This 177-nucleotide RNA was probed chemically with 2A3 and DMS. The DMS profile rests on 4,116 reads. The 2A3 profile rests on 2,833 reads. For 2A3 the reverse transcriptase was SuperScript II with manganese. DMS (dimethyl sulfate) methylates the pairing face of unpaired adenines and cytosines.
RNA sequence: GGGAACGACUCGAGUAGAGUCGAAAAAUAUGAUUUGUCUACACUUUUGAAGUGACUCUGGCAGAAAUGGCAAGGAAAUAGUGAGUGCACUCAUUUCAUUAAGCCGGAUGCACCUUAAUGAGAUGCAACUCAAAAUCGGAUUCGUCCGAUUUUGAGUAAAAGAAACAACAACAACAAC
Reactivity to 2A3 in 0.01 (KOAc 150mM, MgCl2 10mM, bicine 150mM(pH8.5), 24C), signal-to-noise 4, nucleotides 027 to 126: a010u150a060u080g120a150u080u040u170g050u000c060u100a070c010a050c040u020u050u140u180g140a100a030g020u010g130a120c030u010c000u070g010g040c020a020g130a040a100a030u120g060g000c050a050a060g150g020a090a080a070u070a090g140u140g080a100g090u110g060c020a020c050u010c000a010u000u000u000c030a020u070u010a080a000g010c020c000g050g000a040u160g020c040a010c020c000u020u010a030a010u050g000a000g010a010u040g020c020a000
Reactivity to DMS in 0.01 (KOAc 150mM, MgCl2 10mM, bicine 150mM(pH8.5), 24C), signal-to-noise 3, nucleotides 027 to 126: a100u050a040u060g000a070u020u000u000g000u000c060u020a100c070a070c020u000u010u020u020g020a070a060g010u000g000a120c060u010c050u020g000g000c040a080g000a020a090a020u040g010g020c060a100a040g000g000a070a040a060u040a050g010u020g000a120g010u030g000c070a040c070u000c080a030u000u000u010c000a040u020u000a050a050g050c010c040g030g000a070u020g000c000a060c140c010u000u020a010a040u000g000a030g010a020u000g010c230a060